[RMDB]
An RNA of 207 nucleotides, treated with 2A3 and DMS and read out base by base. It was measured as part of the RMDB library RNAMAK. For 2A3 the reverse transcriptase was SuperScript II with manganese. The 2A3 profile rests on 4,121 reads.

RNA sequence: GGGAACGACUCGAGUAGAGUCGAAAACAACCGUUCGCGGUUGAAAAAAACCUUUGUGGUUAACUGUGUGUGCCUUCGGGAACGAUAUGAUUCCCAUUGGGAAUCGAUAUCGAAGCACAGUAGACCACUCUGGUAAAAAUCCGGUUUCGACCGGAAAUCAUGAAAUCUGAUUCGUCAGAUUUCAUGAAAAAGAAACAACAACAACAAC
Reactivity to 2A3 in 0.01 (KOAc 150mM, MgCl2 10mM, bicine 150mM(pH8.5), 24C), signal-to-noise 4, nucleotides 027 to 156: c010a000a000c010c010g040u060u080c300g000c050g100g010u010u030g050a210a000a000a000a000a000a000c000c010u010u000u010g010u010g010g020u030u010a070a050c000u000g010u000g010u000g050u110g050c000c010u030u050c270g070g000g000a120a110c000g010a010u000a000u000g000a000u000u000c030c010c060a240u100u300g000g010g000a000a000u000c020g050a030u020a000u010c000g010a040a000g000c000a000c000a000g000u010a110g020a000c000c000a000c000u000c000u000g000g020u060a110a070a010a020a040u020c010c010g000g040u040u080u080c210g080a040c000c010g000g020a040a040a060
Reactivity to DMS in 0.01 (KOAc 150mM, MgCl2 10mM, bicine 150mM(pH8.5), 24C), signal-to-noise 2, nucleotides 027 to 156: c010a040a230c000c000g030u010u010c130g080c060g020g050u020u010g000a000a000a090a150a160a130a080c010c000u000u000u010g010u000g020g000u000u000a140a080c000u050g030u010g010u010g030u010g010c030c010u030u000c220g060g030g020a090a290c010g010a060u000a000u000g010a050u010u010c000c000c010a300u000u000g040g030g020a040a010u000c000g000a050u010a010u000c010g000a200a300g010c000a000c000a000g000u020a230g030a010c000c000a030c020u000c050u000g040g010u000a010a100a060a100a110u010c010c000g020g020u010u000u000c220g020a080c000c000g000g000a010a030a050